[RMDB]
RNA sequence: GGGAACGACUCGAGUAGAGUCGAAAAGUCCCGCUUUCGGGAGUGUCAUCAUGAGCGACACUGGUUGUCAAGCUGCAUGGAUAUGCGGGGUUGCGCUCCAAGAUCAAGGAGUGUAGGGGCAUACGUGCAGUCCCUUUGGAGUUCAGGCAGGCCGACCGUGUCUUGAAUAGUUCGCUAUUCAAGACACAAAAGAAACAACAACAACAAC
Reactivity to DMS in 0.01 (KOAc 150mM, MgCl2 10mM, bicine 150mM(pH8.5), 24C), signal-to-noise 1, nucleotides 027 to 156: g030u010c000c000c000g030c300u000u000u000c030g040g030g010a130g050u000g000u000c010a110u000c080a110u010g000a100g030c000g010a180c020a000c010u000g030g020u000u000g010u000c050a180a300g040c030u000g000c010a070u000g030g020a130u000a040u000g010c070g000g000g010g010u000u010g000c000g000c020u000c010c000a030a170g010a240u020c250a170a300g040g000a070g040u000g030u000a080g020g020g040g010c030a100u000a020c090g040u000g040c090a080g050u000c040c010c000u000u000u010g090g000a240g020u000u000c030a090g000g000c030a100g000g060c010c010g000a030c100c110
Reactivity to 2A3 in 0.01 (KOAc 150mM, MgCl2 10mM, bicine 150mM(pH8.5), 24C), signal-to-noise 3, nucleotides 027 to 156: g040u040c030c030c010g050c030u090u110u110c070g050g010g020a090g090u050g020u050c050a160u030c010a060u180g070a020g050c050g050a020c010a040c050u030g080g050u140u130g130u130c090a130a040g020c010u030g000c010a020u030g060g120a150u030a010u110g010c000g010g030g040g010u080u080g000c020g010c000u000c000c000a080a060g130a230u180c180a090a190g010g000a010g000u030g020u050a040g050g070g010g000c020a000u030a060c010g000u010g000c010a030g040u080c000c000c000u070u020u040g030g010a030g000u020u010c010a010g010g020c020a010g060g000c010c020g020a020c040c040